[RMDB]
RNA sequence: GGGAACGACUCGAGUAGAGUCGAAAAUGUUGGGUGCACCCUGGGACCCAGUAAUACCCGGGGGGAGGCGGGGUAAACCCAUACUAUGGGAACUGCUGGGUUCCUCGGAUGUCGAUCCCCUCUCCCGAGAGCUCCUUCUUCGGAAGGAGCAAAAGAAACAACAACAACAAC
Reactivity to DMS in 0.01 (KOAc 150mM, MgCl2 10mM, bicine 150mM(pH8.5), 24C), signal-to-noise 4, nucleotides 027 to 129: u010g020u040u050g010g020g020u050g090c080a060c030c010c030u030g030g010g040a050c030c030c020a060g010u040a060a140u030a200c020c000c050g030g110g020g000g010g020a030g050g000c090g000g010g050g010u000a060a070a110c050c020c000a090u020a080c170u080a110u060g050g010g000a140a070c160u000g000c030u020g010g010g050u000u010c030c030u010c250g030g000a000u020g030u030c120g020a090u060c020c030c020c070u020c010u030c050c020c030g010a060g020a180
Reactivity to 2A3 in 0.01 (KOAc 150mM, MgCl2 10mM, bicine 150mM(pH8.5), 24C), signal-to-noise 4, nucleotides 027 to 129: u260g010u050u100g030g000g010u060g030c020a030c000c000c000u000g010g010g010a010c000c000c010a010g010u010a010a080u070a110c020c000c010g010g010g000g010g010g030a020g030g030c090g010g010g000g000u030a070a080a020c000c000c000a010u140a080c160u130a170u110g010g010g020a010a010c020u040g000c000u010g010g000g000u010u010c000c000u010c000g000g040a140u030g010u060c030g070a160u080c000c000c000c000u010c010u000c000c000c020g030a060g010a000